Chemical mapping of a 177-nucleotide RNA with DMS and 2A3.
RNA sequence: GGGAACGACUCGAGUAGAGUCGAAAAGAUAUGGAGAGAACUACAGCGGCGGAAACAGCAUCGAUCUCGGAAACGAGGGAGCUGUGGGCGCUGCUCUCCUAAGUCAAAAGAGAGGUUCGCCUCUCAACGUAUAAUCCAGCUUCGGCUGGAUUAUACGAAAAGAAACAACAACAACAAC
Reactivity to DMS in 0.01 (KOAc 150mM, MgCl2 10mM, bicine 150mM(pH8.5), 24C), signal-to-noise 2, nucleotides 027 to 126: g000a030u000a300u000g000g000a020g010a020g010a050a050c090u010a300c030a020g010c000g000g000c010g020g010a220a060a030c020a010g000c000a300u000c140g000a060u000c010u000c000g000g020a050a080a140c010g000a010g010g000g010a030g010c000u000g010u000g010g000g020c000g010c020u000g010c010u000c010u000c000c000u000a060a090g020u010c020a050a070a140a140g020a020g020a020g010g000u000u000c190g000c010c000u000c000u000c010a060a100
Reactivity to 2A3 in 0.01 (KOAc 150mM, MgCl2 10mM, bicine 150mM(pH8.5), 24C), signal-to-noise 1, nucleotides 027 to 126: g030a000u020a060u150g000g000a020g000a010g030a090a040c140u210a120c300a030g040c020g300g000c040g080g160a120a270a030c020a010g000c000a090u300c040g060a070u000c010u020c020g030g000a040a090a030c020g010a000g000g020g030a010g000c000u030g000u010g040g090g000c010g000c000u010g010c000u010c000u000c000c010u000a130a030g040u020c010a020a030a220a000g010a010g030a000g000g070u070u080c130g130c050c000u000c000u000c020a000a000

DMS adducts were read by reverse transcription with MarathonRT. For DMS, 1,528 sequencing reads were counted.